[RMDB]
RNA sequence: GGGAACGACUCGAGUAGAGUCGAAAAAGCCUGUCAGUCAGAGGAAAGCCUUACAAGUUACUUUCCAGUGUGACGUAGGUGGGACCCCAAGAUAGCUAGAGGACUUGGCAAUGAGGACGGGAUGCCAUCAUAUGGAUGAAGGCGGCUCUGUCCUGGGAUUGUCAUAAAAAUUCGUUUUUAUGACAAUAAAAGAAACAACAACAACAAC
Reactivity to 2A3 in 0.01 (KOAc 150mM, MgCl2 10mM, bicine 150mM(pH8.5), 24C), signal-to-noise 5, nucleotides 027 to 156: a010g050c040c010u040g070u090c030a080g000u000c010a000g030a060g090g010a010a020a010g010c030c020u150u210a130c100a190a060g050u090u100a060c010u020u020u010c020c020a030g040u100g100u040g160a010c030g010u030a010g000g020u030g020g020g050a070c010c010c000c010a020a030g040a130u140a030g050c060u050a020g020a040g110g050a090c010u080u070g040g000c040a050a160u150g040a050g000g000a010c020g010g020g020a050u050g010c060c010a010u020c000a010u100a120u270g300g020a030u040g030a050a030g020g000c010g020g000c020u010c050u100g010u000c000c000u000g010g030g000
Reactivity to DMS in 0.01 (KOAc 150mM, MgCl2 10mM, bicine 150mM(pH8.5), 24C), signal-to-noise 5, nucleotides 027 to 156: a160g020c000c000u000g010u000c020a170g030u000c030a120g020a300g010g010a020a040a060g020c030c090u010u010a300c170a130a140g020u000u010a050c010u000u000u000c010c010a140g020u020g010u000g000a030c010g000u000a050g040g030u000g010g010g010a190c020c000c020c020a060a110g000a110u000a060g000c050u000a080g000a170g020g000a110c040u000u000g010g020c030a100a150u010g000a070g010g000a050c030g000g020g010a130u000g020c000c000a120u000c030a070u000a210u010g030g010a130u000g010a070a100g010g020c020g000g000c020u000c020u010g020u010c010c010u000g010g010g010